Structure probing data (DMS and 2A3) for a 207-nucleotide construct. The RNA was probed in 150 mM KOAc, 10 mM MgCl2 and 150 mM bicine (pH 8.5) at 24 C. Reactivities are given for positions 27 through 156.
[RMDB]
RNA sequence: GGGAACGACUCGAGUAGAGUCGAAAAGAAUUCCUUCUUGAGGUUAGCUCAUCUUAGGGCCUGCCUUAAGUAAGUGGUGUUGACGUUUGGGUCCUACGCAAUGGGAAUCUGUGAACCCUGUCAGGUCCGGAAGGAAGCAGCAGUAAGCAGAACCUCUGUUAUAAUCGAACUUCGGUUCGAUUAUAACAAAAGAAACAACAACAACAAC
Reactivity to DMS in 0.01 (KOAc 150mM, MgCl2 10mM, bicine 150mM(pH8.5), 24C), signal-to-noise 1, nucleotides 027 to 156: g020a140a130u000u040c000c000u000u000c030u000u000g030a020g000g030u010u010a030g030c020u000c020a140u010c260u030u000a180g050g040g020c030c020u000g000c050c000u000u000a010a040g000u010a010a100g020u000g030g020u000g010u000u000g010a060c160g040u000u000u000g010g000g030u000c030c000u000a060c030g000c160a100a170u000g010g000g000a130a090u000c020u020g000u020g030a080a120c010c030c000u000g020u000c100a090g010g030u030c000c010g010g040a140a100g010g000a070a130g000c050a080g010c050a060g000u000a040a170g010c010a120g010a020a150c020c010u010c080u010
Reactivity to 2A3 in 0.01 (KOAc 150mM, MgCl2 10mM, bicine 150mM(pH8.5), 24C), signal-to-noise 2, nucleotides 027 to 156: g070a020a120u040u040c010c000u000u040c010u030u020g010a010g000g020u040u030a000g030c030u010c050a250u150c200u070u220a120g020g000g000c000c020u020g000c010c000u020u020a020a020g030u060a110a060g040u060g130g040u060g050u030u100g070a110c130g020u000u040u180g050g000g020u000c010c010u060a070c090g030c110a070a120u070g000g000g070a010a100u030c010u000g030u020g090a040a040c030c040c010u010g050u060c010a010g020g000u000c000c020g010g160a090a080g010g010a030a030g000c000a000g000c000a030g000u070a070a020g020c010a010g000a040a030c000c050u080c010u000